[RMDB]
RNA sequence: GGGAACGACUCGAGUAGAGUCGAAAAUUGGGAUUAUGGACAGAUUCGCGCCAUCAAAACCAAUGCGUGAAGUAUAAAGAUUGGCAAAAGUUGAGCAAUGGGAAAGAGCACUCUAUGAAUGGGAUAACAACUGCGGUUUUUUCGAAAACCGCAGUUGAAAAGAAACAACAACAACAAC
Reactivity to DMS in 0.01 (KOAc 150mM, MgCl2 10mM, bicine 150mM(pH8.5), 24C), signal-to-noise 2, nucleotides 027 to 126: u020u000g000g020g000a300u010u010a040u010g000g000a100c060a100g050a130u060u020c240g020c090g000c000c020a010u010c130a040a010a100a260c020c020a050a020u050g000c070g000u050g000a100a110g010u030a040u020a060a080a170g020a060u000u000g010g000c030a000a040a050a080g010u020u000g000a070g000c020a030a030u110g010g000g000a000a030a050g000a090g020c030a080c030u000c070u000a150u000g020a050a060u010g020g010g000a030u010a040a150
Reactivity to 2A3 in 0.01 (KOAc 150mM, MgCl2 10mM, bicine 150mM(pH8.5), 24C), signal-to-noise 2, nucleotides 027 to 126: u070u020g010g000g020a020u030u000a050u100g020g000a050c060a060g300a240u140u230c100g040c050g070c130c000a020u080c110a060a020a020a040c010c030a010a010u060g010c000g000u060g080a010a030g120u050a120u030a210a150a000g060a080u000u000g000g000c060a000a000a060a080g110u100u110g020a040g000c030a020a110u110g020g000g000a080a000a000g030a010g000c020a010c030u100c070u130a060u120g100a040a000u130g040g000g060a040u030a150a000